[RMDB]
RNA sequence: GGGAACGACUCGAGUAGAGUCGAAAACGCAAAGCUGCAGCGCGGCGCUCUGGAGGCCUUGCCCCGCGCACUGCUCUUUACAUGGCGCGACGUGAGGGCACUUCGCGGGCAGUGCUGCGGCCUCGUGAAACUGCCCCUAAGUUCGCUUAGGGGCAAACAGGUGAAUAACGUUCGCGUUAUUCACCUGAAAAGAAACAACAACAACAAC
Reactivity to 2A3 in 0.01 (KOAc 150mM, MgCl2 10mM, bicine 150mM(pH8.5), 24C), signal-to-noise 4, nucleotides 027 to 156: c030g010c020a010a020a010g000c010u000g000c000a000g050c000g010c010g240g100c110g030c080u010c010u050g040g000a010g020g010c020c070u050u070g030c030c020c010c010g010c010g000c000a070c060u070g030c010u030c060u100u160u180a110c050a130u210g040g010c010g020c020g030a140c040g030u050g040a150g020g000g020c040a130c070u010u010c020g020c100g050g000g000c010a000g000u000g000c000u000g000c000g000g010c000c000u000c010g010u030g030a110a060a020c070u030g000c000c000c000c000u000a010a010g020u030u090c150g040c120u000u010a000g010g000g000g000c010a010a000a000
Reactivity to DMS in 0.01 (KOAc 150mM, MgCl2 10mM, bicine 150mM(pH8.5), 24C), signal-to-noise 1, nucleotides 027 to 156: c000g000c000a100a040a040g060c050u000g010c030a060g000c000g030c010g010g040c080g030c030u000c050u010g000g000a110g060g010c000c030u030u010g000c010c020c010c040g030c030g030c000a090c050u000g010c000u010c200u000u000u010a080c060a160u000g020g000c060g020c040g050a150c070g050u010g000a300g020g010g040c010a030c020u000u010c010g060c130g010g090g090c020a090g000u000g040c020u000g020c000g040g010c000c030u000c080g030u000g020a150a080a090c080u000g000c000c000c000c000u010a010a030g000u000u010c290g030c010u000u000a050g020g040g010g060c010a020a000a010

This 207-nucleotide RNA was probed chemically with 2A3 and DMS. For 2A3 the reverse transcriptase was SuperScript II with manganese. The reactions ran in a buffer of 150 mM KOAc, 10 mM MgCl2 and 150 mM bicine (pH 8.5), at 24 C.